[RMDB]
An RNA of 177 nucleotides, treated with DMS and 2A3 and read out base by base.
RNA sequence: GGGAACGACUCGAGUAGAGUCGAAAACUCAUAGAAUUUUUGCAAGUGUCUGUCAUGGUCCUUGGAGGGGCCAAGAUAAAGGGUGGGCCCUUAAAUGUAUUACCCCUUUUUGUAUACCCUCUAUGUAUCAGAUGUUGAUUUUCGAAUCAACAUCUGAAAAAGAAACAACAACAACAAC
Reactivity to DMS in 0.01 (KOAc 150mM, MgCl2 10mM, bicine 150mM(pH8.5), 24C), signal-to-noise 2, nucleotides 027 to 126: c040u010c020a070u020a100g020a070a080u010u010u000u000u010g010c070a060a060g000u010g010u000c060u020g000u010c060a100u010g020g010u000c010c010u000u000g030g010a140g010g000g010g010c040c030a010a040g000a040u000a050a050a070g000g000g020u000g020g000g020c060c070c040u000u000a030a110a120u000g000u010a040u010u010a200c050c000c000c040u000u000u000u000u010g020u010a060u000a120c050c040c040u000c030u000a030u010g010u000a160
Reactivity to 2A3 in 0.01 (KOAc 150mM, MgCl2 10mM, bicine 150mM(pH8.5), 24C), signal-to-noise 3, nucleotides 027 to 126: c010u030c010a010u050a040g230a180a150u090u110u150u270u250g020c020a050a040g030u020g060u230c050u030g050u070c040a080u050g010g060u020c030c030u090u080g190g060a110g070g040g000g000c000c000a010a010g020a010u070a030a110a020g030g010g000u070g010g030g080c010c000c030u050u060a100a130a060u070g010u070a130u120u130a100c010c000c010c000u010u040u020u060u060g080u010a100u020a070c040c010c020u000c010u050a050u120g050u010a160

It was measured as part of the RMDB library OK2TST. The reactions ran in a buffer of 150 mM KOAc, 10 mM MgCl2 and 150 mM bicine (pH 8.5), at 24 C. DMS adducts were read by reverse transcription with MarathonRT. The DMS profile rests on 2,216 reads. The 2A3 profile rests on 1,580 reads.